[RMDB]
RNA sequence: GGGAACGACUCGAGUAGAGUCGAAAACUAUGUACAGACAGUACAGUGGAUAAGGUCUCUUGAUAUCCAACUUGAACAAUGGUACUUGCAGUGGUAUCUAUCAAGAUAGGCAGGCUAUCAUAGAAAGAAGAUUAGUAUUAUUCGUAGUACUAAUCUUAAAAGAAACAACAACAACAAC
Reactivity to DMS in 0.01 (KOAc 150mM, MgCl2 10mM, bicine 150mM(pH8.5), 24C), signal-to-noise 9, nucleotides 027 to 126: c020u000a060u010g000u000a020c020a140g010a140c250a140g010u000a010c010a030g020u010g010g000a100u000a050a080g000g000u010c030u010c030u010u000g010a110u020a030u010c010c010a110a270c080u000u010g000a100a150c280a090a060u020g010g010u000a020c010u000u010g010c100a100g020u030g010g000u000a000u010c000u000a070u040c120a040a020g000a080u010a040g010g010c090a060g000g000c130u000a010u010c010a030u010a040g000a060a060a080g010
Reactivity to 2A3 in 0.01 (KOAc 150mM, MgCl2 10mM, bicine 150mM(pH8.5), 24C), signal-to-noise 9, nucleotides 027 to 126: c030u040a080u110g010u000a010c030a140g180a050c050a030g070u010a000c000a020g030u040g050g020a070u040a100a050g070g040u010c010u000c000u020u020g030a020u020a030u070c020c030a040a050c050u030u060g030a130a040c110a190a220u210g020g010u030a020c000u040u090g110c090a080g050u070g170g000u040a010u000c010u000a080u040c020a030a010g030a090u060a040g090g040c090a030g050g000c020u010a000u020c010a030u040a060g120a040a120a000g160
About this RNA: Chemical mapping of a 177-nucleotide RNA with DMS and 2A3. For 2A3, 17,082 sequencing reads were counted. For DMS, 30,674 sequencing reads were counted. 2A3 adducts were read by reverse transcription with SuperScript II with manganese. Source: RMDB library OK1LIB, as collected in RNAgym.